[RMDB]
RNA sequence: GGGAACGACUCGAGUAGAGUCGAAAAUCUCAACGCUUCGGCGUUGAGAAAAUAAAAGCCAUGCACCACCAAACCAGCAUGGCAAGGAAGGAAGGAAUAUAAAAACGGUUGUCUUCGGACAACCGAACCAGUAUGAAUACUUCGGUAUUCAUACUGGAAAAGAAACAACAACAACAAC
Reactivity to DMS in 0.01 (KOAc 150mM, MgCl2 10mM, bicine 150mM(pH8.5), 24C), signal-to-noise 2, nucleotides 027 to 126: u010c000u000c000a000a020c000g010c010u010u010c180g030g010c000g020u010u000g000a010g000a010a000a080a080u000a050a090a180a090g040c000c000a010u000g040c000a190c170c120a130c150c150a080a100a090c110c050a110g010c000a000u010g000g000c000a040a020g010g010a070a040g000g010a060a040g000g000a080a060u020a090u020a060a030a100a070a120c000g000g000u010u000g000u000c000u000u000c160g010g000a030c000a000a000c000c000g000a020a020
Reactivity to 2A3 in 0.01 (KOAc 150mM, MgCl2 10mM, bicine 150mM(pH8.5), 24C), signal-to-noise 4, nucleotides 027 to 126: u000c000u010c000a010a000c000g010c010u040u080c240g140g000c000g000u010u000g000a000g000a030a020a000a000u030a000a050a000a000g000c000c000a000u010g000c000a040c070c000a070c020c060a150a060a080c030c030a030g000c020a010u020g020g020c010a010a020g050g030a040a030g040g040a050a030g080g040a110a030u160a030u070a200a120a050a020a010c010g010g000u010u000g000u000c010u030u070c200g020g000a000c000a000a010c000c000g000a000a000
The record gives the reactivity of an RNA of 177 nucleotides to DMS and 2A3. As a SHAPE reagent, 2A3 marks flexible, mostly unpaired nucleotides at the ribose 2'-OH. The RNA was probed in 150 mM KOAc, 10 mM MgCl2 and 150 mM bicine (pH 8.5) at 24 C. The DMS profile rests on 3,053 reads.